Structure probing data (2A3 and DMS) for a 177-nucleotide construct. The 2A3 profile rests on 16,836 reads. Source: RMDB library TTRDEL, as collected in RNAgym.

[RMDB]
RNA sequence: GGGAACGACUCGAGUAGAGUCGAAAAGAUAUGGACUAGUUCGAAGAACUACGUAACAUCAGGUCGGAAACGACCUGUGGUAGGGAGAACGAUGUCCUAAGUCAAAAGCUGAUCUUCGGAUCAGCAAGAUAGUCCUAUUCUUCGGAAUAGGACUAUCAAAAGAAACAACAACAACAAC
Reactivity to 2A3 in 0.01 (KOAc 150mM, MgCl2 10mM, bicine 150mM(pH8.5), 24C), signal-to-noise 6, nucleotides 027 to 126: g010a030u060a050u120g010g000a000c010u010a030g010u010u020c070g270a300a030g020a130a040c030u040a020c050g130u160a110a070c020a180u220c020a020g000g000u000c000g000g020a060a060a060c020g000a010c010c010u010g010u010g010g010u020a020g000g020g020a060g000a010a000c030g010a020u270g010u000c000c000u010a080a010g040u010c020a000a000a110a120g000c000u000g000a010u000c000u040u120c300g070g000a010u000c010a000g000c000a000a000
Reactivity to DMS in 0.01 (KOAc 150mM, MgCl2 10mM, bicine 150mM(pH8.5), 24C), signal-to-noise 8, nucleotides 027 to 126: g000a030u000a300u010g010g010a010c000u000a300g010u000u000c000g000a100a160g010a120a220c010u000a000c010g010u010a080a110c160a040u000c000a010g000g000u000c000g000g000a080a080a180c010g000a000c000c000u000g010u000g010g010u000a010g000g000g000a100g010a020a010c000g010a140u010g000u000c000c000u000a020a100g010u000c040a100a080a110a150g000c000u000g000a010u000c000u000u020c240g010g000a020u000c000a010g000c000a030a020